[RMDB]
Chemical mapping of a 177-nucleotide RNA with 2A3 and DMS. The 2A3 profile rests on 15,747 reads. It was measured as part of the RMDB library TTRDEL. 2A3 is a SHAPE reagent: it acylates the 2'-hydroxyl of flexible nucleotides of all four kinds. For DMS the reverse transcriptase was MarathonRT. Conditions: 150 mM KOAc, 10 mM MgCl2 and 150 mM bicine (pH 8.5), 24 C.
RNA sequence: GGGAACGACUCGAGUAGAGUCGAAAAGAUAUGGAUCGAGAGGGAGGCUGGCAUUCGGAAACGAAUGCUAAAGCCGAGGAUCUCUCGAGUCCUAAGUCAAAGCAUUUCAUCUUCGGAUGAAAUGCAAGGCUAAGUAUAGGUUCGCCUAUACUUAGCCAAAAGAAACAACAACAACAAC
Reactivity to 2A3 in 0.01 (KOAc 150mM, MgCl2 10mM, bicine 150mM(pH8.5), 24C), signal-to-noise 2, nucleotides 027 to 126: g020a000u010a000u030g000g000a000u010c000g010a000g010a000g010g010g000a000g000g000c020u000g020g000c000a010u000u010c000g000g000a020a000a000c000g000a000a020u000g010c020u020a110a080a000g000c030c010g000a020g000g000a000u000c000u000c000u000c000g000a010g060u100c000c010u000a000a000g000u000c020a000a040a090g000c000a000u010u010u000c000a010u000c010u050u060c250g200g010a010u010g000a010a000a000u000g010c000a020a070
Reactivity to DMS in 0.01 (KOAc 150mM, MgCl2 10mM, bicine 150mM(pH8.5), 24C), signal-to-noise 3, nucleotides 027 to 126: g000a010u000a000u010g000g000a270u000c000g000a010g000a040g010g000g010a000g030g020c010u000g000g010c000a000u000u000c000g020g000a000a000a010c000g020a010a000u000g000c000u000a000a030a040g060c000c000g000a020g020g000a010u010c010u000c000u000c000g000a020g000u010c000c000u000a000a100g000u000c010a080a090a170g000c000a000u010u000u000c000a000u000c000u000u020c240g020g010a020u000g000a000a000a000u000g000c010a040a030